This 177-nucleotide RNA was probed chemically with 2A3 and DMS. The 2A3 profile rests on 7,436 reads. Source: RMDB library OK2TST, as collected in RNAgym. The DMS profile rests on 7,880 reads.
RNA sequence: GGGAACGACUCGAGUAGAGUCGAAAAGGCGGCGACCACCCGCGCGGCCUUGCUCGCGAGCACGCUUUGCAGAUGAAUCUGGUUCAGCACAAACGUCUCGACAAGCUGGGCCUCGAUGAUUGGCGCGACGUUCUCACUUAUUCGUAAGUGAGAACGUAAAAGAAACAACAACAACAAC
Reactivity to 2A3 in 0.01 (KOAc 150mM, MgCl2 10mM, bicine 150mM(pH8.5), 24C), signal-to-noise 4, nucleotides 027 to 126: g080g020c060g030g000c020g030a160c010c000a030c010c020c020g000c010g010c000g010g000c000c000u000u030g000c000u010c030g010c010g000a010g010c150a010c040g020c090u050u030u040g020c090a080g020a160u050g040a060a050u120c210u250g240g040u040u010c020a010g000c070a020c050a050a030a010c020g020u000c010u000c020g270a290c020a020a010g000c000u000g010g000g020c020c010u020c020g020a070u090g030a040u010u100g050g010c010g010c020g030
Reactivity to DMS in 0.01 (KOAc 150mM, MgCl2 10mM, bicine 150mM(pH8.5), 24C), signal-to-noise 4, nucleotides 027 to 126: g020g020c030g010g010c020g010a070c030c030a090c050c030c070g010c030g010c150g010g010c000c010u000u000g000c000u000c060g020c020g000a020g010c200a020c010g020c180u000u000u000g010c040a070g010a130u000g000a040a040u010c210u020g020g010u000u010c020a030g030c030a130c130a010a020a040c030g000u000c010u000c020g010a140c050a030a040g000c000u000g000g010g000c000c010u000c040g010a080u010g010a100u000u000g000g010c010g010c030g020